Structure probing data (DMS and 2A3) for a 177-nucleotide construct. Source: RMDB library M2PK90, as collected in RNAgym. In probing experiments dimethyl sulfate is read out at A N1 and C N3, which are open when not base-paired. Conditions: 150 mM KOAc, 10 mM MgCl2 and 150 mM bicine (pH 8.5), 24 C. DMS adducts were read by reverse transcription with MarathonRT.

[RMDB]
RNA sequence: GGGAACGACUCGAGUAGAGUCGAAAAACUUUUAGCGAUUAUCGUUAUAGAAAUGUCCUUGGCAUAUCGCUAUGCACAGAGGUAUUAGUAGCGCAAAAGCUAUUGAAGGACAUUACCUCUCAAAUAAUUCUUAUCUUACAUUCGUGUAAGAUAAGAAAAAAGAAACAACAACAACAAC
Reactivity to DMS in 0.01 (KOAc 150mM, MgCl2 10mM, bicine 150mM(pH8.5), 24C), signal-to-noise 6, nucleotides 027 to 126: a080c060u000u000u000u000a000g000c000g010a080u010u010a070u010c070g020u000u000a100u000a110g010a050a040a050u000g000u000c010c000u000u010g020g010c040a030u000a030u000c040g010c020u000a010u010g000c120a100c220a050g030a030g000g000u000a030u000u000a040g010u000a000g000c000g010c130a070a080a100a170g010c000u000a010u000u000g010a060a060g000g000a040c050a020u000u000a030c020c020u000c010u010c180a050a060a080u000a060a120
Reactivity to 2A3 in 0.01 (KOAc 150mM, MgCl2 10mM, bicine 150mM(pH8.5), 24C), signal-to-noise 3, nucleotides 027 to 126: a020c000u140u100u060u070a040g000c010g030a020u090u110a060u260c040g010u050u050a130u050a190g150a060a100a020u050g020u010c000c000u030u100g030g010c020a010u000a010u060c000g000c010u020a020u120g040c080a030c030a120g070a010g030g070u040a040u050u090a030g020u010a010g010c010g010c090a120a060a110a040g010c010u020a020u040u110g040a050a020g020g010a000c000a000u000u010a020c000c010u050c000u030c040a040a080a070u140a060a120